An RNA of 177 nucleotides, treated with 2A3 and DMS and read out base by base. The RNA was probed in 150 mM KOAc, 10 mM MgCl2 and 150 mM bicine (pH 8.5) at 24 C. The 2A3 profile rests on 6,488 reads. Source: RMDB library OK1LIB, as collected in RNAgym. For 2A3 the reverse transcriptase was SuperScript II with manganese. For DMS, 5,265 sequencing reads were counted.
RNA sequence: GGGAACGACUCGAGUAGAGUCGAAAAGCUCGCCGUAAGGAAACCGAGCGAAGACAUGUGGGACGAAUCCCGACCACUUGUCGAUUAGCAGCUUGACGGCCGUGAGGUACUCCGUCUUGCUGCGAAAGGGAUGCAGGUCCUUCGGGACUUGCAUCCCAAAAGAAACAACAACAACAAC
Reactivity to 2A3 in 0.01 (KOAc 150mM, MgCl2 10mM, bicine 150mM(pH8.5), 24C), signal-to-noise 6, nucleotides 027 to 126: g040c010u030c010g050c030c020g070u150a110a110g080g050a120a100a090c070c000g010a000g010c010g010a160a010g010a000c000a010u010g000u000g000g010g020a060c050g100a110a080u050c020c000c000g010a020c000c000a000c000u000u010g000u000c010g010a040u070u080a010g010c000a000g000c000u000u010g000a000c010g000g000c030c020g110u140g080a100g040g060u100a070c070u040c040c000g000u000c000u010u000g010c000u010g000c010g000a030a000a000
Reactivity to DMS in 0.01 (KOAc 150mM, MgCl2 10mM, bicine 150mM(pH8.5), 24C), signal-to-noise 3, nucleotides 027 to 126: g020c000u000c000g020c010c030g030u030a070a160g010g020a120a100a150c300c020g000a000g020c000g000a130a070g020a000c000a010u000g000u000g000g000g000a090c090g050a090a160u010c010c000c000g000a030c000c000a000c000u000u010g000u010c010g020a140u020u020a180g000c000a020g000c000u000u000g010a000c000g030g000c140c030g010u050g000a210g000g000u050a110c220u010c040c000g000u010c000u010u000g010c010u030g000c000g010a060a100a060